[RMDB]
Source information
Chemical mapping of a 207-nucleotide RNA with DMS and 2A3. Reactivities are given for positions 27 through 156. DMS adducts were read by reverse transcription with MarathonRT. The reactions ran in a buffer of 150 mM KOAc, 10 mM MgCl2 and 150 mM bicine (pH 8.5), at 24 C. For 2A3, 2,140 sequencing reads were counted. The DMS profile rests on 7,870 reads.

RNA sequence: GGGAACGACUCGAGUAGAGUCGAAAAGUGAGUUUGGCCAAGAAGUUGCAGAUUUGAGCAAAGAGUUGCUUGUUGUGACUUUAGAUUCAGUUACUUCUGCAUUACAAUUUUUGACGCUUAAUGUUGGUAGGCUUACCGAAUGUCUUAAGGGCUUUGGUAGGUAUUUAAACUUCGGUUUAAAUACCUAAAAAGAAACAACAACAACAAC
Reactivity to DMS in 0.01 (KOAc 150mM, MgCl2 10mM, bicine 150mM(pH8.5), 24C), signal-to-noise 3, nucleotides 027 to 156: g030u000g020a040g000u000u000u000g030g020c020c020a050a150g000a170a080g020u010u010g000c020a080g010a110u000u010u000g010a160g010c070a100a110a160g010a150g020u000u000g020c030u000u000g030u000u010g030u000g000a130c040u000u000u010a060g010a120u010u000c030a060g010u000u000a030c050u010u010c020u010g030c020a060u000u000a060c060a060a090u000u000u000u000u000g020a090c090g010c060u000u000a040a060u000g000u010u000g020g000u000a050g020g010c030u000u000a090c040c010g010a060a060u000g020u000c030u010u000a070a080g020g020g010c010u000u000u000g010g000
Reactivity to 2A3 in 0.01 (KOAc 150mM, MgCl2 10mM, bicine 150mM(pH8.5), 24C), signal-to-noise 4, nucleotides 027 to 156: g070u040g060a030g020u020u050u090g020g000c020c000a030a030g080a060a010g030u050u030g000c000a010g020a090u110u120u160g070a120g010c060a050a060a000g080a030g040u020u010g020c080u020u040g060u010u020g010u010g010a020c000u060u030u090a050g020a100u090u080c020a010g020u040u070a030c020u030u030c010u020g000c000a020u010u040a030c040a050a130u040u050u080u080u270g110a060c050g020c060u060u050a060a010u090g050u160u060g050g020u020a010g000g070c050u030u000a030c010c020g020a050a020u130g020u020c000u050u080a050a060g080g020g010c030u040u000u000g040g010